Chemical mapping of a 177-nucleotide RNA with DMS and 2A3. Source: RMDB library OK2TRN, as collected in RNAgym. The RNA was probed in 150 mM KOAc, 10 mM MgCl2 and 150 mM bicine (pH 8.5) at 24 C.

RNA sequence: GGGAACGACUCGAGUAGAGUCGAAAAGCACACUUAGGUAUACAGCCUGAUCCUUGCUCUGACCUGGUAACAACGCUUCCUCCUCCAGAGACUUUGAGAUAGAGCGAGCGAUCCCUGUGCACCAUUCAUUUCCUGCUGGAUUCGUCCAGCAGGAAAUAAAAGAAACAACAACAACAAC
Reactivity to DMS in 0.01 (KOAc 150mM, MgCl2 10mM, bicine 150mM(pH8.5), 24C), signal-to-noise 2, nucleotides 027 to 126: g000c030a040c040a080c130u000u000a070g000g000u000a070u000a100c220a120g000c060c040u010g010a020u000c010c020u000u000g000c000u000c010u000g020a220c050c000u020g010g020u000a060a130c150a050a030c130g000c070u000u000c010c000u010c030c010u000c020c030a070g010a070g010a080c110u000u000u000g000a140g000a130u030a060g000a030g000c010g010a000g000c200g030a030u000c000c200c020u000g040u000g000c020a230c010c080a130u010u000c140
Reactivity to 2A3 in 0.01 (KOAc 150mM, MgCl2 10mM, bicine 150mM(pH8.5), 24C), signal-to-noise 1, nucleotides 027 to 126: g000c000a000c000a000c070u130u120a030g100g000u060a200u040a130c040a000g050c030c040u050g010a020u000c000c020u000u030g000c000u030c010u030g060a040c000c000u000g040g060u070a150a050c060a090a000c130g010c060u170u080c020c040u000c000c030u010c020c000a030g030a010g010a110c050u070u220u140g090a100g020a050u190a130g010a000g010c000g000a010g000c090g020a000u020c010c000c000u020g020u000g020c010a030c030c000a050u150u090c030